[RMDB]
Overview
The record gives the reactivity of an RNA of 207 nucleotides to 2A3 and DMS. 2A3 adducts were read by reverse transcription with SuperScript II with manganese. For DMS the reverse transcriptase was MarathonRT. The reactions ran in a buffer of 150 mM KOAc, 10 mM MgCl2 and 150 mM bicine (pH 8.5), at 24 C.

RNA sequence: GGGAACGACUCGAGUAGAGUCGAAAAAGCGGGGUCACGGGCAUUUCUGGCUCGGUGACCGGGUCGGCACCACGGUACUCGGCUACCCCGAUCCGUACACGAUUUUCGUGGAGCGGGUCACCAAGCUCACCUACGAGUGGACGUCCGACGGCCCGAAUAGAUUCAUCUAGUUCGCUAGAUGAAUCUAAAAAGAAACAACAACAACAAC
Reactivity to 2A3 in 0.01 (KOAc 150mM, MgCl2 10mM, bicine 150mM(pH8.5), 24C), signal-to-noise 3, nucleotides 027 to 156: a000g120c230g050g020g000g000u020c010a010c010g000g010g000c030a040u050u220u140c170u200g100g000c020u020c070g140g110u040g010a000c000c000g000g000g010u000c000g000g000c020a020c050c000a020c030g000g030u030a020c020u030c090g060g000c020u060a080c010c000c000c090g000a010u000c000c000g020u030a010c000a000c010g060a060u080u070u210u280c000g000u000g020g000a080g070c040g000g000g010u000c010a020c030c030a050a010g000c010u020c030a040c020c020u060a050c040g050a080g080u030g020g140a300c030g010u040c010c000g000a020c000g040g020c000c000c000g010a040a030
Reactivity to DMS in 0.01 (KOAc 150mM, MgCl2 10mM, bicine 150mM(pH8.5), 24C), signal-to-noise 2, nucleotides 027 to 156: a080g020c090g000g000g060g000u000c010a040c010g050g020g020c010a120u010u010u020c160u000g020g030c020u000c010g050g020u000g040a020c000c020g010g010g030u000c000g010g040c070a200c020c030a060c030g010g000u000a020c140u000c100g030g020c030u000a180c050c020c000c020g000a020u000c010c000g030u000a120c010a030c020g000a230u000u010u000u000c010g040u000g010g000a150g060c000g010g060g010u010c000a060c050c010a190a300g010c020u020c010a060c120c020u010a080c080g010a170g020u000g010g010a080c040g010u010c020c020g040a070c020g020g020c010c000c010g000a060a300